[RMDB]
RNA sequence: GGGAACGACUCGAGUAGAGUCGAAAAUUAAACUGUCUAAAAAUGACUCGCCAAAGUCAUUGGUUAAUUUCUAAGUACAGACAUAAUUUACCAUAGAUUUUUUAAUUGAACCGAUAACGGGAAAUUCAUCAUUCACCGGAUUCGUCCGGUGAAUGAUAAAAGAAACAACAACAACAAC
Reactivity to DMS in 0.01 (KOAc 150mM, MgCl2 10mM, bicine 150mM(pH8.5), 24C), signal-to-noise 2, nucleotides 027 to 126: u000u000a000a000a030c010u000g010u000c010u000a010a140a280a070a010u000g000a010c000u000c060g010c210c300a190a220a010g000u000c000a000u000u010g000g010u000u000a010a000u000u000u000c070u010a160a180g000u070a300c150a100g020a030c300a050u050a030a030u040u000u000a010c010c000a200u000a010g000a000u000u000u000u000u000u000a010a010u010u000g010a100a230c030c020g000a170u060a030a060c110g000g000g010a030a190a080u020u020c060
Reactivity to 2A3 in 0.01 (KOAc 150mM, MgCl2 10mM, bicine 150mM(pH8.5), 24C), signal-to-noise 2, nucleotides 027 to 126: u000u000a010a000a000c020u010g020u000c000u020a030a050a080a040a040u000g000a000c000u010c040g190c130c020a080a060a000g000u000c000a000u000u030g000g000u000u060a000a010u000u060u070c130u190a160a200g080u080a170c080a110g110a030c030a120u260a000a030u050u020u050a010c000c000a000u030a000g000a040u010u060u020u020u000u010a010a010u010u020g110a040a030c010c050g040a060u050a200a100c090g000g030g070a020a050a080u100u030c020